Description: The record gives the reactivity of an RNA of 177 nucleotides to 2A3 and DMS. DMS (dimethyl sulfate) methylates the pairing face of unpaired adenines and cytosines. The 2A3 profile rests on 10,073 reads.
[RMDB]
RNA sequence: GGGAACGACUCGAGUAGAGUCGAAAACGCUAUAGAUUCGUCUAUAGCGACUCCUACCCGCCGGCCGCUGCGCGCGGUAGGUGACGCAAACCACCGUGCGAAAUGUACUGGUUUUCGAACCAGUAAAUAACCAAAUUACUUUCGAGUAAUUUGGUUAAAAAGAAACAACAACAACAAC
Reactivity to 2A3 in 0.01 (KOAc 150mM, MgCl2 10mM, bicine 150mM(pH8.5), 24C), signal-to-noise 5, nucleotides 027 to 126: c000g000c000u000a010u010a010g010a020u020u050c170g020u020c120u010a000u010a010g000c010g010a000c010u010c000c000u020a090c010c000c010g030c010c010g060g010c020c020g020c050u100g060c010g000c000g010c010g010g020u040a180g010g020u030g060a080c130g020c220a100a050a030c010c010a010c000c010g010u010g010c010g030a100a020a040u160g010u020a010c000u000g010g020u000u010u040u080c160g030a010a000c000c000a000g000u030a010a050a020
Reactivity to DMS in 0.01 (KOAc 150mM, MgCl2 10mM, bicine 150mM(pH8.5), 24C), signal-to-noise 6, nucleotides 027 to 126: c010g000c000u000a000u000a000g000a040u000u010c170g010u000c000u000a000u000a000g000c000g010a050c120u000c020c010u000a130c080c030c020g010c070c020g000g020c030c040g010c080u000g010c030g030c010g020c000g010g010u000a040g020g010u000g010a090c180g010c260a080a120a050c020c010a060c010c010g010u000g020c010g000a050a090a060u010g010u000a010c000u000g000g000u000u000u000u010c160g010a030a020c000c000a000g000u000a000a070a110

Record summary: For DMS, 10,350 sequencing reads were counted. It was measured as part of the RMDB library M2PK50. The reactions ran in a buffer of 150 mM KOAc, 10 mM MgCl2 and 150 mM bicine (pH 8.5), at 24 C.